The record gives the reactivity of an RNA of 177 nucleotides to 2A3 and DMS. Conditions: 150 mM KOAc, 10 mM MgCl2 and 150 mM bicine (pH 8.5), 24 C. Source: RMDB library OK1LIB, as collected in RNAgym. For DMS the reverse transcriptase was MarathonRT. High 2A3 reactivity points to a flexible backbone, as in loops and unpaired stretches.

RNA sequence: GGGAACGACUCGAGUAGAGUCGAAAAUAUACAUACAUCUAUACAUACGCCCAUCGAUACAUACCUUUAUGUGAGAUUAGCGCGAAAUGAGCAAAAUGGAUCGAUCACUGUUAGGUAUGGAUGACAAAUUUAUGGACCUAUUCGUAGGUCCAUAAAUAAAAGAAACAACAACAACAAC
Reactivity to 2A3 in 0.01 (KOAc 150mM, MgCl2 10mM, bicine 150mM(pH8.5), 24C), signal-to-noise 9, nucleotides 027 to 126: u170a010u050a030c110a050u210a040c030a040u030c050u070a070u020a060c040a040u160a080c060g050c010c010c010a030u020c030g040a000u020a110c000a010u050a050c000c010u080u140u170a150u150g040u030g010a070g010a100u060u140a120g070c010g010c010g130a140a160a140u220g030a070g030c030a030a010a060a090u140g070g000a020u010c010g020a010u030c030a020c090u090g060u220u050a010g010g010u000a000u010g010g010a020u050g050a040c130a020a110
Reactivity to DMS in 0.01 (KOAc 150mM, MgCl2 10mM, bicine 150mM(pH8.5), 24C), signal-to-noise 8, nucleotides 027 to 126: u030a070u020a050c130a110u040a130c080a020u010c050u000a040u010a030c040a080u010a050c080g010c060c050c080a100u010c050g000a050u010a050c000a000u000a070c080c010u000u000u020a050u030g010u000g010a080g000a120u020u030a090g010c090g030c040g000a070a090a070u030g020a100g000c070a040a060a070a070u020g010g000a020u010c020g000a060u010c090a060c080u010g010u020u010a030g020g010u000a000u000g010g000a020u000g010a120c240a040a050